[RMDB]
RNA sequence: GGGAACGACUCGAGUAGAGUCGAAAACGUAAAGGGCGAGCUUUUGUCCGGAAUGGUUCCGCCGUGAUCGGGCCAUGCAAUAGUUGCCACCGACAACUAUGCUCCGGUUGCUCAGGCAGCGUAACGCACAAUGGAACAACCUUCGGGUUGUUCCAAACGUAUCGUUAAGUUUCGACUUAACGAUACGAAAAGAAACAACAACAACAAC
Reactivity to 2A3 in 0.01 (KOAc 150mM, MgCl2 10mM, bicine 150mM(pH8.5), 24C), signal-to-noise 4, nucleotides 027 to 156: c030g010u080a100a020a080g090g040g020c040g020a050g020c020u050u150u110u150g070u040c010c000g000g010a060a050u050g010g020u290u300c010c020g000c030c040g130u140g070a190u090c020g000g000g010c020c020a020u050g000c010a060a260u010a030g010u000u000g030c040c060a130c060c060g050a070c020a000a000c000u000a000u030g020c010u000c020c000g010g040u030u100g000c000u010c010a010g090g020c020a030g030c020g030u040a070a020c040g010c050a040c030a080a170u130g020g000a000a000c000a010a000c000c000u050u090c200g070g000g000u000u000g000u000u020c000c000a000a010a000
Reactivity to DMS in 0.01 (KOAc 150mM, MgCl2 10mM, bicine 150mM(pH8.5), 24C), signal-to-noise 3, nucleotides 027 to 156: c050g010u010a090a090a100g010g000g010c040g010a090g020c110u000u010u000u010g020u000c020c020g000g010a140a060u000g010g020u000u000c030c010g030c060c060g060u010g010a080u010c030g010g020g000c020c020a060u000g030c030a070a060u000a020g030u010u000g000c020c020a300c090c080g020a130c000a020a020c010u000a020u000g020c050u000c020c030g010g020u010u000g010c020u000c060a110g030g020c040a060g000c060g000u000a030a150c060g010c040a070c090a150a230u010g020g020a020a020c000a010a020c000c010u000u000c300g070g000g030u000u020g000u000u000c010c000a000a020a060